About this RNA
Structure probing data (DMS and 2A3) for a 177-nucleotide construct. 2A3 adducts were read by reverse transcription with SuperScript II with manganese. The reactions ran in a buffer of 150 mM KOAc, 10 mM MgCl2 and 150 mM bicine (pH 8.5), at 24 C.
[RMDB]
RNA sequence: GGGAACGACUCGAGUAGAGUCGAAAAAGUAAGACCAUAGCGAUAGGAGGAGAUGCUAGGAGUAGGGGGAGACCGAAGCGAGGAGGAAAGCAAAGAAAGCAACGGGGCUAGCCGGUGGGUGUUCCGCGUACAUUUGUUAGUUCGCUAACAAAUGUACAAAAGAAACAACAACAACAAC
Reactivity to DMS in 0.01 (KOAc 150mM, MgCl2 10mM, bicine 150mM(pH8.5), 24C), signal-to-noise 3, nucleotides 027 to 126: a130g020u000a060a080g010a130c020c040a080u000a080g000c040g010a110u010a070g010g010a090g010g010a060g000a080u010g010c100u000a070g030g010a060g000u010a080g000g030g000g010g010a100g010a070c070c050g010a080a090g010c090g010a070g010g000a070g010g000a040a060a050g010c070a050a040a100g010a050a070a090g010c080a050a100c080g000g020g000g010c050u000a110g000c050c020g000g000u030g000g010g020u000g010u000u000c010c040g020c220
Reactivity to 2A3 in 0.01 (KOAc 150mM, MgCl2 10mM, bicine 150mM(pH8.5), 24C), signal-to-noise 2, nucleotides 027 to 126: a000g100u120a040a030g010a050c020c010a110u070a000g060c030g050a020u050a100g070g020a030g010g000a060g020a050u110g000c010u040a040g030g030a040g030u110a080g050g020g000g050g010a050g010a000c010c020g040a040a000g050c070g010a030g000g040a010g000g010a070a050a000g050c070a110a040a020g050a050a110a000g010c010a020a040c050g000g000g060g000c030u010a030g040c010c020g010g040u070g010g020g010u060g020u070u030c030c010g000c020